Source information
Source: RMDB library M2RFOK, as collected in RNAgym. Structure probing data (2A3 and DMS) for a 207-nucleotide construct. The DMS profile rests on 4,064 reads.
[RMDB]
RNA sequence: GGGAACGACUCGAGUAGAGUCGAAAAACAUGCUGGCCAACCCAACCCCACGAUCCUCCAUCGGUAUGAUCAUGAUGUGUUCUCAAAUAUCAGGCCAGUAAAUCACCAUGCUCGUGCUGGUAAAGGCAACUUAUGCCCAAGUUCGCUUGGGCAUAAAGGAGAAGAUACGAUUCGUCGUAUCUUCUCCAAAAGAAACAACAACAACAAC
Reactivity to 2A3 in 0.01 (KOAc 150mM, MgCl2 10mM, bicine 150mM(pH8.5), 24C), signal-to-noise 5, nucleotides 027 to 156: a000c040a020u060g000c000u020g010g000c010c000a040a050c050c030c060a080a060c030c030c020c020a070c070g100a130u070c020c030u030c020c010a040u040c010g010g010u050a050u040g000a010u030c010a020u040g040a050u080g060u010g020u100u030c050u000c020a080a090a030u220a090u120c080a050g000g030c000c000a000g000u030a020a050a020u080c020a000c020c020a020u050g000c010u010c020g030u020g010c010u020g010g000u040a130a090a020g040g020c030a040a040c040u020u010a000u010g000c000c000c000a000a000g000u030u080c080g030c120u000u010g020g000g000c000a000u000a000a000a000
Reactivity to DMS in 0.01 (KOAc 150mM, MgCl2 10mM, bicine 150mM(pH8.5), 24C), signal-to-noise 2, nucleotides 027 to 156: a040c050a090u020g030c020u000g010g000c040c030a130a160c060c050c020a120a160c060c020c020c010a110c120g000a130u000c020c010u010c030c020a030u010c000g010g000u010a040u000g050a040u000c050a040u000g010a020u000g020u000g010u000u000c030u000c070a080a080a200u010a110u000c050a150g030g010c000c010a040g020u010a010a050a020u010c030a020c030c020a040u000g010c070u010c000g080u000g010c020u030g000g050u000a030a040a050g000g000c050a060a150c060u000u000a030u000g000c020c000c010a040a030g010u000u000c300g020c000u000u000g020g000g020c000a000u000a000a040a110
The RNA was probed in 150 mM KOAc, 10 mM MgCl2 and 150 mM bicine (pH 8.5) at 24 C.
For 2A3, 4,056 sequencing reads were counted.